[RMDB]
RNA sequence: GGGAACGACUCGAGUAGAGUCGAAAAGUUCCCUCUUAGCGUGGAGGUUUAACUACGCUCGUUCCCCAUAUCGGUGUGGGCGCACCGGAUUUAUAAAUCAAACUCCUUUAGGGAACGGAAAGGAACAAAAAUCCAUGGGAGUUCGCUCCCAUGGAAAUCUAGAGUCUAAGUUCGCUUAGACUCUAGAAAAAGAAACAACAACAACAAC
Reactivity to 2A3 in 0.01 (KOAc 150mM, MgCl2 10mM, bicine 150mM(pH8.5), 24C), signal-to-noise 2, nucleotides 027 to 156: g000u000u030c000c000c030u000c000u000u040a030g000c000g010u010g030g020a060g020g070u100u190u130a080a040c030u020a010c020g000c010u010c000g000u000u000c040c000c000c000a030u010a020u090c010g000g000u010g010u050g030g090g080c060g000c070a000c000c010g010g000a000u030u190u000a200u080a030a120a050u080c090a060a020a130c030u040c000c010u040u060u100a080g030g080g000a090a030c040g030g050a080a070a030g000g000a010a010c050a030a140a070a000a010u000c000c000a000u000g010g020g000a010g000u020u000c020g060c030u000c010c010c000a000u000g020g000a000a000a000
Reactivity to DMS in 0.01 (KOAc 150mM, MgCl2 10mM, bicine 150mM(pH8.5), 24C), signal-to-noise 2, nucleotides 027 to 156: g020u000u010c010c000c000u000c020u000u020a020g040c010g090u000g000g030a070g030g020u000u000u000a130a160c000u010a020c030g010c010u010c020g000u000u000c030c000c010c060a140u010a060u000c050g030g020u010g030u010g000g050g020c190g030c030a040c030c020g030g010a130u000u010u000a080u010a120a080a130u000c030a070a130a130c080u000c000c020u000u000u000a060g010g010g000a070a060c020g000g000a090a090a060g050g000a070a130c040a010a060a120a190a120u000c010c020a020u000g010g000g030a070g040u000u000c300g010c030u000c000c000c000a000u000g000g000a000a000a010
Notes:
The data come from the RNA Mapping Database (RMDB), library M2RFPK. An RNA of 207 nucleotides, treated with 2A3 and DMS and read out base by base. For DMS, 3,532 sequencing reads were counted. The reactions ran in a buffer of 150 mM KOAc, 10 mM MgCl2 and 150 mM bicine (pH 8.5), at 24 C. 2A3 is a SHAPE reagent: it acylates the 2'-hydroxyl of flexible nucleotides of all four kinds. 2A3 adducts were read by reverse transcription with SuperScript II with manganese.